[RMDB]
RNA sequence: GGGAACGACUCGAGUAGAGUCGAAAAUCGUGUUUGUGAGUAUGAAAAUCUUCAUUCUUACGGAAACGUAAGUAGUUAUCGAACUGUUCACAAUACUCAUCAAAGUUAUCUUCAAGCAUCAUUUGGAGGUACGACUGCAGUUCGCUGCAGUCGUACCAAAAGAAACAACAACAACAAC
Reactivity to 2A3 in 0.01 (KOAc 150mM, MgCl2 10mM, bicine 150mM(pH8.5), 24C), signal-to-noise 1, nucleotides 027 to 126: u080c020g000u030g070u050u010u030g000u000g000a010g020u000a020u060g030a010a050a040a130u060c120u100u040c020a100u050u000c000u020u000a000c010g040g040a080a010a040c010g000u010a010a040g000u010a020g030u030u080a160u220c040g000a070a020c050u070g070u050u030c030a010c000a050a020u010a070c000u000c020a150u040c070a090a020a110g060u060u020a110u040c050u060u030c010a020a010g000c000a170u110c010a120u250u020u020g080g000a090
Reactivity to DMS in 0.01 (KOAc 150mM, MgCl2 10mM, bicine 150mM(pH8.5), 24C), signal-to-noise 1, nucleotides 027 to 126: u010c110g060u030g010u010u000u000g010u030g000a000g010u000a040u000g000a070a110a100a050u000c130u030u010c040a090u010u010c000u010u000a000c000g030g000a040a090a180c000g010u000a030a030g000u000a010g000u000u010a060u010c140g100a030a070c180u000g000u000u000c050a060c090a130a020u000a040c060u000c040a080u000c060a020a040a040g010u000u000a040u000c050u000u000c000a030a030g020c250a090u000c150a090u010u000u010g030g000a280
Background:
An RNA of 177 nucleotides, treated with 2A3 and DMS and read out base by base. The RNA was probed in 150 mM KOAc, 10 mM MgCl2 and 150 mM bicine (pH 8.5) at 24 C. For 2A3 the reverse transcriptase was SuperScript II with manganese.